Conditions: 150 mM KOAc, 10 mM MgCl2 and 150 mM bicine (pH 8.5), 24 C. An RNA of 177 nucleotides, treated with 2A3 and DMS and read out base by base. It was measured as part of the RMDB library OK1LIB. The DMS profile rests on 5,778 reads. DMS adducts were read by reverse transcription with MarathonRT. For 2A3 the reverse transcriptase was SuperScript II with manganese.
RNA sequence: GGGAACGACUCGAGUAGAGUCGAAAAUGCAGGAUACCAGACCGGGUAUGUGCGUGCGCUCUUUUACUAUCUUGCAGUUAUGGAACCAGGCCACUUCUAUCUUGGCGUGCUCAAUGAGGAGCGUGGCCCGUCCAUAGGAUUUCGAUCCUAUGGACGGAAAAGAAACAACAACAACAAC
Reactivity to 2A3 in 0.01 (KOAc 150mM, MgCl2 10mM, bicine 150mM(pH8.5), 24C), signal-to-noise 6, nucleotides 027 to 126: u060g000c010a000g020g030a020u010a060c020c030a030g060a100c020c050g050g040g000u100a060u200g100u050g010c060g020u060g020c060g010c010u000c000u010u110u060u080a080c050u030a040u030c010u010u040g030c020a030g020u090u110a100u170g040g040a030a030c020c020a040g050g020c020c000a020c000u090u020c010u050a300u040c040u040u050g040g010c040g110u110g020c010u010c030a060a120u250g020a050g070g000a010g010c060g020u040g000g000c000
Reactivity to DMS in 0.01 (KOAc 150mM, MgCl2 10mM, bicine 150mM(pH8.5), 24C), signal-to-noise 3, nucleotides 027 to 126: u010g000c010a050g000g010a030u010a060c090c090a070g000a160c110c040g000g000g030u000a050u060g010u010g000c020g000u000g030c040g000c040u010c000u020u020u010u020a150c240u000a040u010c030u010u000g010c030a030g020u010u000a070u000g010g000a080a130c020c040a170g000g000c010c010a020c050u000u000c020u000a090u010c020u000u000g000g000c040g020u020g000c070u030c040a040a100u000g010a110g000g010a020g010c190g000u000g000g000c030